[RMDB]
RNA sequence: GGGAACGACUCGAGUAGAGUCGAAAAAUUAUCUCUCAGAGUGAUGACAUCAUCAAAUCAUGUAGCUUCUGGAAAACACUAGUAUACAUUUGCAAGAUGUUGAGAGUGAAUGAGACAAAUGACAUCUUAGUAGUUUUAUGAAAAGAACCUUGUGGAAACGUGAUAAUACCUUCGGGUAUUAUCACGUAAAAGAAACAACAACAACAAC
Reactivity to DMS in 0.01 (KOAc 150mM, MgCl2 10mM, bicine 150mM(pH8.5), 24C), signal-to-noise 2, nucleotides 027 to 156: a040u020u000a070u000c020u000c000u020c020a110g010a210g030u010g000a100u020g020a100c010a300u010c020a110u030c040a120a080a110u010c090a050u000g030u000a040g030c000u000u010c030u000g000g010a110a080a130a200c020a010c010u000a050g030u000a090u000a050c010a040u000u010u000g020c070a080a170g020a050u000g010u000u000g030a150g000a170g030u000g000a120a080u000g020a070g010a090c060a050a050a080u000g010a050c000a060u010c010u000u000a090g030u000a070g000u000u000u040u000a090u010g000a080a070a110a040g000a030a050c030c020u000u000g040u000g020g000a100a080
Reactivity to 2A3 in 0.01 (KOAc 150mM, MgCl2 10mM, bicine 150mM(pH8.5), 24C), signal-to-noise 4, nucleotides 027 to 156: a000u160u060a060u010c010u000c000u010c040a050g020a020g100u070g030a110u080g050a030c030a080u140c020a010u030c040a090a110a120u110c040a040u070g010u040a010g040c030u070u060c030u060g100g030a030a080a110a040c030a020c030u020a010g040u060a050u080a200c030a050u040u060u110g050c040a050a020g020a040u000g000u040u040g040a060g020a030g030u070g040a050a120u130g070a070g020a030c040a020a090a050u120g020a010c010a040u010c020u040u020a020g010u000a000g020u060u000u090u130a080u080g090a030a070a020a060g050a010a040c030c020u150u100g030u050g100g050a220a090

This 207-nucleotide RNA was probed chemically with DMS and 2A3. The DMS profile rests on 3,884 reads. In probing experiments dimethyl sulfate is read out at A N1 and C N3, which are open when not base-paired. Values cover nucleotides 27 to 156. For DMS the reverse transcriptase was MarathonRT. The RNA was probed in 150 mM KOAc, 10 mM MgCl2 and 150 mM bicine (pH 8.5) at 24 C.